Chemical mapping of a 177-nucleotide RNA with DMS and 2A3. Conditions: 150 mM KOAc, 10 mM MgCl2 and 150 mM bicine (pH 8.5), 24 C. The data come from the RNA Mapping Database (RMDB), library OK1LIB. Reactivities are given for positions 27 through 126. DMS adducts were read by reverse transcription with MarathonRT.
RNA sequence: GGGAACGACUCGAGUAGAGUCGAAAAGUCGGGGCGGAAGGCAAGGUCGAACUCGCUGAAAUCUGGUAGAUGCGGCAGAUCCUGCGUGAUCUCCUCGACGUGGCGUCGGUGUAGAGCAAGGUCGGCCUAAAUCCCAGUACUUCGGUACUGGGAUUUAAAAAGAAACAACAACAACAAC
Reactivity to DMS in 0.01 (KOAc 150mM, MgCl2 10mM, bicine 150mM(pH8.5), 24C), signal-to-noise 4, nucleotides 027 to 126: g000u010c040g010g010g010g020c040g010g010a100a080g010g000c040a070a050g000g020u000c040g020a070a130c080u010c050g000c020u000g010a090a090a110u000c060u020g020g020u020a080g040a090u020g010c050g010g000c080a160g000a040u000c040c030u010g000c090g010u020g000a120u000c000u010c020c030u000c020g010a040c020g030u020g010g010c050g010u000c010g000g000u020g010u010a060g000a110g010c030a050a070g020g010u010c020g000g000c060c050
Reactivity to 2A3 in 0.01 (KOAc 150mM, MgCl2 10mM, bicine 150mM(pH8.5), 24C), signal-to-noise 4, nucleotides 027 to 126: g040u040c040g000g010g030g010c050g030g050a030a070g080g010c030a020a020g030g000u010c020g010a050a040c080u020c070g010c020u020g050a040a030a090u050c030u070g050g110u140a060g030a120u080g070c040g030g000c000a000g000a060u070c010c010u050g060c030g110u120g060a090u020c020u000c020c010u040c020g020a040c010g010u010g050g020c030g000u030c010g010g030u050g020u090a180g000a010g040c020a040a000g050g020u020c010g040g010c010c000